The record gives the reactivity of an RNA of 207 nucleotides to 2A3 and DMS. The DMS profile rests on 2,466 reads. Reactivities are given for positions 27 through 156. In probing experiments dimethyl sulfate is read out at A N1 and C N3, which are open when not base-paired. Conditions: 150 mM KOAc, 10 mM MgCl2 and 150 mM bicine (pH 8.5), 24 C.

RNA sequence: GGGAACGACUCGAGUAGAGUCGAAAAAGCAGGGUAAGGAUUAGUGCUGGGGGUCAGUGAAUAGAAAACUAUUAAGUGGAAAUGUCAGUGGCAAGUGGGGAUUCUGGCUAAACUGAUUUAGCUGGUGAAGGCAGAUCAAGAUGAUCAGACACCAACACGUGCUAAUAGAUUUCGAUCUAUUAGCACGAAAAGAAACAACAACAACAAC
Reactivity to 2A3 in 0.01 (KOAc 150mM, MgCl2 10mM, bicine 150mM(pH8.5), 24C), signal-to-noise 3, nucleotides 027 to 156: a010g050c060a020g010g020g050u070a050a020g000g030a060u050u110a060g030u050g090c060u040g020g000g000g000g000u020c010a020g030u020g050a010a010u060a060g080a050a150a030a000c040u040a020u240u120a130a000g060u070g040g060a040a100a030u060g010u010c010a010g010u030g100g000c020a060a040g040u040g020g010g000g000a010u090u000c000u000g020g000c010u030a070a040a050c070u040g070a060u030u030u120a070g020c030u020g060g000u050g080a040a030g030g030c040a020g000a010u040c010a040a040g070a090u130g000a010u020c000a020g040a040c010a000c060c040a040a010c060a010
Reactivity to DMS in 0.01 (KOAc 150mM, MgCl2 10mM, bicine 150mM(pH8.5), 24C), signal-to-noise 2, nucleotides 027 to 156: a100g000c010a050g030g010g030u000a090a040g010g000a130u020u000a080g030u000g020c010u000g010g020g000g000g080u000c040a050g060u030g000a050a090u000a070g010a110a070a150a150c070u000a090u010u010a050a200g010u000g000g010a110a100a080u010g040u000c060a070g000u010g010g000c050a030a080g040u000g000g050g010g010a130u000u000c020u030g040g020c010u010a030a070a300c150u010g000a090u000u000u000a030g000c000u000g030g020u010g000a120a100g000g000c100a020g020a030u000c020a030a090g020a120u000g000a040u010c050a090g000a170c000a000c000c020a040a050c050a250